Source information: An RNA of 177 nucleotides, treated with 2A3 and read out base by base. For 2A3, 567 sequencing reads were counted. The reactions ran in a buffer of 150 mM KOAc, 10 mM MgCl2 and 150 mM bicine (pH 8.5), at 24 C.
[RMDB]
RNA sequence: GGGAACGACUCGAGUAGAGUCGAAAAUCGUGAGAUGUGGUGCCUCACGCGCUCGAGGCGUCCGUGGUCAGAGAGACCACUGACGCAAAAACUCGAGCGCAAAUAAACUGCAUUACAUGUAGAAUAACACUAGGGCAGCUUUCGAGCUGCCCUAGUGAAAAGAAACAACAACAACAAC
Reactivity to 2A3 in 0.01 (KOAc 150mM, MgCl2 10mM, bicine 150mM(pH8.5), 24C), signal-to-noise 1, nucleotides 027 to 126: u210c010g000u020g000a110g000a040u130g020u040g070g000u000g050c000c000u010c000a010c020g010c000g000c000u000c020g000a010g020g000c000g000u000c010c020g000u000g000g000u000c100a060g180a070g020a000g000a290c000c000a000c000u000g020a000c000g000c080a170a070a000a000a060c010u010c000g000a000g000c030g000c000a000a000a000u040a000a130a000c020u000g000c020a020u090u040a060c020a020u060g070u040a090g110a220a100u230a200a000

It was measured as part of the RMDB library OK1LIB. Values cover nucleotides 27 to 126.